[RMDB]
RNA sequence: GGGAACGACUCGAGUAGAGUCGAAAAAGAUCGUCGCCGCGUUGCGCGCGGGCAAGCACGUGUUCUGCGAGAAACCGCUGUCGCUCGAUCUCGGCGAAUGCGAGCGGGUGCUCGCCGAGGCGCGCGACCAGCGCUCAGCUUUCGAGCUGAGCGCUGGAAAAGAAACAACAACAACAAC
Reactivity to DMS in 0.01 (KOAc 150mM, MgCl2 10mM, bicine 150mM(pH8.5), 24C), signal-to-noise 2, nucleotides 027 to 126: a030g000a110u020c070g010u000c030g040c060c040g010c080g020u000u010g000c070g000c180g030c020g010g000g000c020a090a100g000c040a050c040g060u000g010u010u000c020u020g020c000g010a080g000a050a070a090c200c090g000c040u000g010u020c140g020c030u000c080g020a160u000c030u010c010g020g010c050g010a030a000u000g020c000g000a060g020c020g030g020g010u000g010c010u000c030g030c010c010g000a070g000g000c000g010c040g000c010g010a030
Reactivity to 2A3 in 0.01 (KOAc 150mM, MgCl2 10mM, bicine 150mM(pH8.5), 24C), signal-to-noise 2, nucleotides 027 to 126: a020g100a120u120c050g040u000c010g040c090c050g000c060g030u040u050g060c010g000c010g000c030g020g020g040c030a050a030g020c000a010c050g040u040g050u080u020c070u140g050c010g010a030g030a130a070a070c080c010g050c090u110g180u280c090g040c100u040c060g050a140u010c010u010c010g090g070c040g000a050a000u050g010c040g010a010g040c000g010g160g080u070g010c000u010c010g000c020c020g020a010g010g070c000g000c000g000c000g000a010
The record gives the reactivity of an RNA of 177 nucleotides to DMS and 2A3. Conditions: 150 mM KOAc, 10 mM MgCl2 and 150 mM bicine (pH 8.5), 24 C. Reactivities are rounded to 0.1 and cut off at 0 and 3. 2A3 adducts were read by reverse transcription with SuperScript II with manganese. The data come from the RNA Mapping Database (RMDB), library OK2TRN.